Source: RMDB library OK1LIB, as collected in RNAgym. An RNA of 177 nucleotides, treated with 2A3 and read out base by base.

[RMDB]
RNA sequence: GGGAACGACUCGAGUAGAGUCGAAAAUAACAAAAACAAACACGCGAACCUGGCAAAGGCCGCAGAGCCAGGAGCGCGAUAAACGCAGAAAGAUCUGCGGCCAAAAGCGAGAAGAACUCGCAACAAACGCACUGUACCAGUUCGCUGGUGCAGUGCGAAAAGAAACAACAACAACAAC
Reactivity to 2A3 in 0.01 (KOAc 150mM, MgCl2 10mM, bicine 150mM(pH8.5), 24C), signal-to-noise 3, nucleotides 027 to 126: u160a010a040c110a060a130a030a070a000c080a050a140a000c040a020c050g010c000g010a000a060c000c000u000g000g010c030a070a090a230g010g020c000c000g010c000a000g000a000g010c000c000a000g000g000a000g000c020g000c000g010a000u210a010a130a020c110g010c090a010g120a130a080a000g100a040u010c000u000g000c010g010g010c000c000a000a030a000a000g000c000g000a000g010a230a000g060a120a100c000u000c000g010c000a020a010c030a000a070a000
The RNA was probed in 150 mM KOAc, 10 mM MgCl2 and 150 mM bicine (pH 8.5) at 24 C. The 2A3 profile rests on 2,672 reads. For 2A3 the reverse transcriptase was SuperScript II with manganese. Values cover nucleotides 27 to 126.